[RMDB]
About this RNA
An RNA of 177 nucleotides, treated with 2A3 and DMS and read out base by base. For 2A3 the reverse transcriptase was SuperScript II with manganese. The reactions ran in a buffer of 150 mM KOAc, 10 mM MgCl2 and 150 mM bicine (pH 8.5), at 24 C. For 2A3, 900 sequencing reads were counted.
RNA sequence: GGGAACGACUCGAGUAGAGUCGAAAACUCUGGAGGCCUUGCCCCGCGCACUGCUCUUUACAUGGCCCGACGUGAGGGCACUUCGCGGGCAGUGCUGCGGCCUCGUGUGGGAUCGCGUCAGGACUGAGUACACUUUAGGGUUCGCCCUAAAGUGUACAAAAGAAACAACAACAACAAC
Reactivity to 2A3 in 0.01 (KOAc 150mM, MgCl2 10mM, bicine 150mM(pH8.5), 24C), signal-to-noise 1, nucleotides 027 to 126: c020u030c020u120g080g010a000g010g000c000c050u050u080g070c030c020c010c000g030c000g020c000a010c010u000g040c010u010c050u050u280u140a070c070a180u140g090g000c010c000c010g090a100c060g180u240g140a120g050g040g000c050a110c000u040u100c060g020c050g090g020g000c000a030g000u010g010c000u050g020c010g020g000c000c000u020c010g000u040g000u030g060g070g030a010u030c030g000c000g050u020c070a130g040g030a020c010u010g050a030
Reactivity to DMS in 0.01 (KOAc 150mM, MgCl2 10mM, bicine 150mM(pH8.5), 24C), signal-to-noise 3, nucleotides 027 to 126: c040u010c020u000g030g010a070g020g020c050c030u010u000g010c060c030c020c050g050c040g010c020a020c010u000g010c000u000c010u000u000u020a190c150a110u010g000g000c000c000c000g010a150c120g020u010g010a100g010g000g020c010a020c030u000u000c120g010c300g000g000g010c020a030g000u000g000c010u000g020c030g010g000c050c020u020c030g020u010g020u000g000g000g010a080u000c060g010c030g000u000c100a100g000g010a120c080u000g000a300